Structure probing data (2A3 and DMS) for a 177-nucleotide construct. The reactions ran in a buffer of 150 mM KOAc, 10 mM MgCl2 and 150 mM bicine (pH 8.5), at 24 C. For 2A3 the reverse transcriptase was SuperScript II with manganese. The DMS profile rests on 1,453 reads.
[RMDB]
RNA sequence: GGGAACGACUCGAGUAGAGUCGAAAAAAUAGCGGGUCAAGGUACAACGCAGAGAGAUAGGCUCAUCCCAUGUUCUCUUCGGAGUACCAAGACUUCGGUACAGAAGAGAUACCGACUCUUCAUAGAAACUACUUCUUCUCUUCGGAGAAGAAGUAGUAAAAGAAACAACAACAACAAC
Reactivity to 2A3 in 0.01 (KOAc 150mM, MgCl2 10mM, bicine 150mM(pH8.5), 24C), signal-to-noise 1, nucleotides 027 to 126: a000a010u160a050g080c030g010g000g020u020c010a000a070g020g000u020a010c010a030a000c030g010c020a000g000a000g000a010g010a030u050a160g040g000c060u060c100a110u140c050c010c020a010u080g060u070u010c010u010c000u000u020c000g020g000a010g010u000a000c000c000a010a000g020a010c000u030u030c010g020g000u090a030c030a110g040a000a010g000a000g000a020u070a130c030c010g070a060c010u000c000u050u040c010a010u010a070g200a030a180
Reactivity to DMS in 0.01 (KOAc 150mM, MgCl2 10mM, bicine 150mM(pH8.5), 24C), signal-to-noise 3, nucleotides 027 to 126: a050a030u000a030g010c040g030g000g020u000c000a020a300g020g000u000a000c010a040a230c010g020c120a010g000a000g020a010g010a080u010a090g000g000c200u010c300a090u010c200c000c020a080u000g000u020u000c000u000c000u010u010c000g000g000a300g020u000a010c000c000a000a220g000a030c060u000u000c020g010g000u010a070c150a130g000a040a000g000a010g020a070u000a140c040c020g000a110c000u000c010u000u000c020a160u010a130g000a080a070